An RNA of 177 nucleotides, treated with 2A3 and DMS and read out base by base.
Conditions: 150 mM KOAc, 10 mM MgCl2 and 150 mM bicine (pH 8.5), 24 C.
For 2A3, 1,220 sequencing reads were counted.
2A3 adducts were read by reverse transcription with SuperScript II with manganese.
The DMS profile rests on 1,279 reads.
[RMDB]
RNA sequence: GGGAACGACUCGAGUAGAGUCGAAAAAGGCGCUGGCGGCAGGCAGCCUGAUGGAGCCGAAAGAGGUUGCGGAAUCCGUGAUGUUCAUGCUGACACGCCCGCGCAAUAUCACCAUCCGCGAUCUGGAGACGAGUGGUAAUUUCGAUUACCACUCGUCAAAAGAAACAACAACAACAAC
Reactivity to 2A3 in 0.01 (KOAc 150mM, MgCl2 10mM, bicine 150mM(pH8.5), 24C), signal-to-noise 2, nucleotides 027 to 126: a000g070g000c010g000c020u000g000g000c000g020g040c080a050g050g070c000a000g000c000c000u010g030a020u080g040g010a020g010c030c020g030a070a060a000g200a070g000g140u120u090g060c040g020g050a130a190u030c030c000g020u070g070a090u150g080u090u050c070a030u100g030c010u020g020a020c020a000c030g000c010c020c000g010c000g050c010a020a020u080a020u070c070a090c050c020a020u030c020c010g080c080g060a140u020c000u000g020g010a000
Reactivity to DMS in 0.01 (KOAc 150mM, MgCl2 10mM, bicine 150mM(pH8.5), 24C), signal-to-noise 1, nucleotides 027 to 126: a140g000g020c010g030c020u000g020g000c000g000g000c120a120g010g000c020a040g040c050c040u000g000a060u020g010g020a090g000c050c020g010a020a170a060g020a120g000g000u000u000g020c030g010g000a030a100u000c020c030g010u020g030a080u000g010u000u010c030a080u010g010c020u010g020a070c070a120c030g000c010c010c090g000c010g010c030a040a010u020a050u000c060a100c030c140a110u010c060c040g000c090g000a080u000c060u000g000g000a300